[RMDB]
RNA sequence: GGGAACGACUCGAGUAGAGUCGAAAAUUUGAUGACUACAAAUGAUAGGCUUUUUCCUGGCCAGUUUAUGUAAAUAACAAUUUGCUUACAUGUUCACAUAGUAAUUGCAUUAGAUAGUACUGGCAGAGGAGCUGACAUGGCAGGAGUUUAAUGAUAAGGACGGAUUUAAUUUCGAUUAAAUCCGUCCAAAAGAAACAACAACAACAAC
Reactivity to DMS in 0.01 (KOAc 150mM, MgCl2 10mM, bicine 150mM(pH8.5), 24C), signal-to-noise 1, nucleotides 027 to 156: u000u000u000g010a100u000g000a210c030u000a170c000a050a120a080u030g010a120u000a230g020g000c000u000u000u000u020u000c010c040u010g040g030c000c000a060g020u000u000u000a050u000g010u000a030a050a080u020a110a110c020a080a100u000u000u000g030c070u000u000a170c080a170u010g020u010u020c040a100c030a140u030a020g010u000a040a040u000u010g020c000a150u000u000a030g030a060u000a040g040u030a020c050u000g000g020c020a130g010a050g010g000a110g010c070u000g010a160c020a060u000g000g010c080a050g060g020a200g000u020u000u000a030a080u000g020a080u010a080a290
Reactivity to 2A3 in 0.01 (KOAc 150mM, MgCl2 10mM, bicine 150mM(pH8.5), 24C), signal-to-noise 2, nucleotides 027 to 156: u080u030u140g050a080u050g070a070c030u070a020c210a030a080a020u120g060a080u090a130g010g040c040u050u070u080u170u050c000c010u030g160g020c000c000a000g010u020u070u070a020u040g070u080a000a000a160u110a070a040c070a030a120u030u100u160g000c000u010u050a010c010a100u020g080u130u240c090a040c040a210u160a050g000u000a010a000u050u060g010c000a020u020u020a000g020a070u020a010g110u050a000c000u000g040g000c010a010g000a010g090g000a000g010c000u030g150a010c000a020u050g010g000c010a010g010g040a020g020u020u000u150a100a050u120g080a050u000a250a000

This 207-nucleotide RNA was probed chemically with DMS and 2A3.
Reactivities are rounded to 0.1 and cut off at 0 and 3.
The reactions ran in a buffer of 150 mM KOAc, 10 mM MgCl2 and 150 mM bicine (pH 8.5), at 24 C.
It was measured as part of the RMDB library OK3TST.